Structure probing data (2A3 and DMS) for a 177-nucleotide construct. Reactivities are rounded to 0.1 and cut off at 0 and 3. The data come from the RNA Mapping Database (RMDB), library TTRDEL. For 2A3, 2,058 sequencing reads were counted.
[RMDB]
RNA sequence: GGGAACGACUCGAGUAGAGUCGAAAAGAUAUGGACCGUGAGACCUUUUGACGUCGGUGUCGGAAACGACUAACGACGAUAAGGUCCCGGUCCUAAGUCAAAAGUGUUCUGCUUCGGCAGAACACAACUUGAUACCGGUGUUCGCACCGGUAUCAAGAAAAGAAACAACAACAACAAC
Reactivity to 2A3 in 0.01 (KOAc 150mM, MgCl2 10mM, bicine 150mM(pH8.5), 24C), signal-to-noise 2, nucleotides 027 to 126: g020a010u020a030u100g000g010a000c000c030g070u190g100a300g000a050c000c000u060u130u290u300g300a130c010g010u000c000g000g030u050g000u000c000g010g050a030a040a020c000g050a010c040u160a300a150c040g000a010c040g060a070u120a150a030g020g000u000c010c000c000g000g000u000c000c010u010a010a000g030u000c010a000a010a080a130g010u000g000u030u010c000u010g030c000u080u100c180g110g000c000a000g020a000a000c000a000c000a010a010
Reactivity to DMS in 0.01 (KOAc 150mM, MgCl2 10mM, bicine 150mM(pH8.5), 24C), signal-to-noise 1, nucleotides 027 to 126: g020a030u000a300u030g000g010a000c000c020g000u010g000a140g020a010c020c000u000u000u010u000g010a170c050g000u000c000g010g000u000g000u010c010g010g000a040a030a100c010g000a010c000u020a150a090c030g000a010c000g020a030u000a000a000g000g010u020c000c000c000g000g000u000c000c000u000a000a070g010u000c030a170a060a130a130g010u000g000u000u000c000u000g000c000u000u020c230g010g000c000a030g000a020a010c000a000c000a010a070